[RMDB]
RNA sequence: GGGAACGACUCGAGUAGAGUCGAAAAUUUCCCUGUAAGAGGCUGGUGGACCUGCAGCCACUGCAGGAGAAGGAAGACAGACUAAAGGACGAGAUCCGGGAGGAAAGACACAGAAUCAGGAAAGUGGGAUAUACUGACUGCUAUCAGAAAAGUGAGAUAUCCAUGAUAUCUUCGGAUAUCAUGGAUAAAAAGAAACAACAACAACAAC
Reactivity to 2A3 in 0.01 (KOAc 150mM, MgCl2 10mM, bicine 150mM(pH8.5), 24C), signal-to-noise 3, nucleotides 027 to 156: u020u020u000c000c000c000u000g020u040a060a070g020a030g040g000c020u010g020g060u070g020g030a080c020c020u030g000c030a000g050c090c080a130c120u040g000c000a000g000g020a110g000a070a010g060g010a010a000g040a050c050a020g020a000c030u110a090a100a020g030g020a030c050g020a020g010a070u030c030c000g030g000g000a030g020g010a140a020a000g040a010c040a000c000a050g090a030a040u070c020a020g030g010a050a020a020g010u060g030g020g000a010u060a010u030a110c010u000g050a010c020u040g030c030u090a040u110c010a000g080a080a130a100a010g050u080g020a040g020a050
Reactivity to DMS in 0.01 (KOAc 150mM, MgCl2 10mM, bicine 150mM(pH8.5), 24C), signal-to-noise 3, nucleotides 027 to 156: u020u000u000c000c000c000u000g040u000a060a110g030a090g060g030c040u000g010g020u010g010g050a140c050c030u010g020c020a120g010c080c060a080c060u000g010c020a040g020g010a150g020a110a070g010g000a080a110g030a040c040a090g010a150c060u010a050a100a060g000g030a050c040g020a090g010a290u000c020c030g010g000g010a100g000g010a050a080a080g000a090c040a110c070a100g020a080a120u000c040a050g000g000a050a060a070g000u000g000g000g000a110u000a080u000a090c040u010g010a080c040u000g010c040u000a130u010c050a090g000a050a060a080a110g010u000g000a100g010a180